This 177-nucleotide RNA was probed chemically with DMS and 2A3. 2A3 adducts were read by reverse transcription with SuperScript II with manganese. The RNA was probed in 150 mM KOAc, 10 mM MgCl2 and 150 mM bicine (pH 8.5) at 24 C. The 2A3 profile rests on 1,313 reads.
RNA sequence: GGGAACGACUCGAGUAGAGUCGAAAAAUAAGUCCUUUCGAGGACUUAUAAUGCUGGCCAAAGAGGACCUGGGGGUGUCUGGGCUGCUAAACUCAUCAGCCGUGGCUUUGGGGUUCGCCCCAAAGAAUGUUACUCCCAUAUUCGUAUGGGAGUAACAAAAAGAAACAACAACAACAAC
Reactivity to DMS in 0.01 (KOAc 150mM, MgCl2 10mM, bicine 150mM(pH8.5), 24C), signal-to-noise 3, nucleotides 027 to 126: a020u000a000a010g010u010c010c000u010u000u020c180g000a030g020g020a030c000u000u000a000u000a090a100u010g010c030u000g010g030c030c020a040a110a090g010a080g000g010a060c060c040u010g000g010g010g000g020u010g000u000c060u010g020g020g000c030u000g000c110u000a030a080a090c110u010c070a070u000c060a050g020c030c030g020u000g010g010c010u000u010u010g010g000g000g030u000u020c270g010c010c000c000c000a020a010a020g000a100a090
Reactivity to 2A3 in 0.01 (KOAc 150mM, MgCl2 10mM, bicine 150mM(pH8.5), 24C), signal-to-noise 1, nucleotides 027 to 126: a010u030a010a000g000u010c000c010u010u040u110c200g100a000g000g000a000c010u010u000a010u000a020a060u090g020c050u020g030g000c000c010a090a190a120g060a080g020g050a040c000c060u050g030g000g030g000g010u010g000u070c020u040g000g050g000c010u000g000c010u080a140a100a000c050u030c090a040u020c020a040g050c070c040g010u040g060g010c000u010u000u010g010g000g000g020u020u010c220g090c000c000c000c010a000a000a000g020a030a030